[RMDB]
The record gives the reactivity of an RNA of 177 nucleotides to DMS and 2A3. It was measured as part of the RMDB library OK2TST. 2A3 adducts were read by reverse transcription with SuperScript II with manganese. For DMS the reverse transcriptase was MarathonRT. The RNA was probed in 150 mM KOAc, 10 mM MgCl2 and 150 mM bicine (pH 8.5) at 24 C. The DMS profile rests on 1,315 reads.
RNA sequence: GGGAACGACUCGAGUAGAGUCGAAAAGGCUGAGCCCCUUCCUUGUCCAUUCUCAGGCCAGGGACCUGGAAGAUCUCAGCCCGAUUCUCAGAUGGCCUGGAAUCCAACAGCAGCACCCAGUUUGAGGGGAUCUUCACACUUUCGAGUGUGAAGAUCCAAAAGAAACAACAACAACAAC
Reactivity to DMS in 0.01 (KOAc 150mM, MgCl2 10mM, bicine 150mM(pH8.5), 24C), signal-to-noise 2, nucleotides 027 to 126: g000g030c020u000g010a000g000c300c130c050c000u010u000c000c020u000u000g010u000c010c000a050u010u000c150u000c070a020g030g000c010c020a040g000g000g000a010c000c030u020g000g000a030a030g000a090u010c010u000c020a040g020c020c010c000g000a110u010u000c000u000c020a290g020a100u010g020g010c030c010u000g050g020a170a060u010c060c040a060a070c060a070g010c050a030g000c060a060c050c010c020a050g010u010u000u010g010a180g010g010
Reactivity to 2A3 in 0.01 (KOAc 150mM, MgCl2 10mM, bicine 150mM(pH8.5), 24C), signal-to-noise 1, nucleotides 027 to 126: g000g000c000u020g000a000g030c020c040c030c020u000u030c000c000u000u000g010u000c020c000a140u200u070c090u020c130a050g000g000c010c020a010g000g010g020a000c020c010u020g010g000a030a050g030a130u070c000u000c020a000g020c020c000c000g000a080u090u000c010u000c020a060g090a300u060g000g060c000c030u010g010g020a020a090u050c040c010a050a000c020a080g100c030a000g070c000a040c040c000c020a080g060u100u050u130g150a120g050g090